[RMDB]
RNA sequence: GGGAACGACUCGAGUAGAGUCGAAAAUACGCUGGUAGCAGCAAGUAGCAGCUCUAUCCGCAGAUGAGCGGAAUAUACAAAUGAAAAUGGAUCUCGAUAGAGAUGCUACAAUCGAGACCAUUAGAGAAAAUCGAUUACCUUUCGAGGUAAUCGAUUUAAAAGAAACAACAACAACAAC
Reactivity to DMS in 0.01 (KOAc 150mM, MgCl2 10mM, bicine 150mM(pH8.5), 24C), signal-to-noise 3, nucleotides 027 to 126: u040a060c170g010c010u000g000g020u050a130g000c030a030g010c020a130a150g020u000a020g010c000a030g000c020u000c010u000a080u010c000c010g010c080a120g010a150u070g010a100g000c010g000g000a040a040u030a080u060a140c200a030a050a120u000g010a070a030a050a000u010g000g030a180u000c020u000c010g040a040u010a050g000a050g010a040u020g020c010u000a050c010a120a110u010c030g000a020g010a020c000c000a000u000u000a080g020a190g000a040
Reactivity to 2A3 in 0.01 (KOAc 150mM, MgCl2 10mM, bicine 150mM(pH8.5), 24C), signal-to-noise 4, nucleotides 027 to 126: u130a000c030g000c000u040g020g020u080a090g100c070a000g010c050a040a060g010u020a000g000c030a010g000c010u000c010u020a070u020c020c000g020c070a070g090a300u280g110a060g040c010g020g060a040a000u120a000u040a030c090a030a140a060u210g110a120a060a010a020u080g030g030a250u000c000u000c000g000a010u070a040g090a010g020a020u030g020c000u010a030c070a040a000u010c000g000a000g000a000c000c000a020u030u060a040g090a020g010a040
Chemical mapping of a 177-nucleotide RNA with DMS and 2A3.
It was measured as part of the RMDB library OK1LIB.
Conditions: 150 mM KOAc, 10 mM MgCl2 and 150 mM bicine (pH 8.5), 24 C.
Reactivities are given for positions 27 through 126.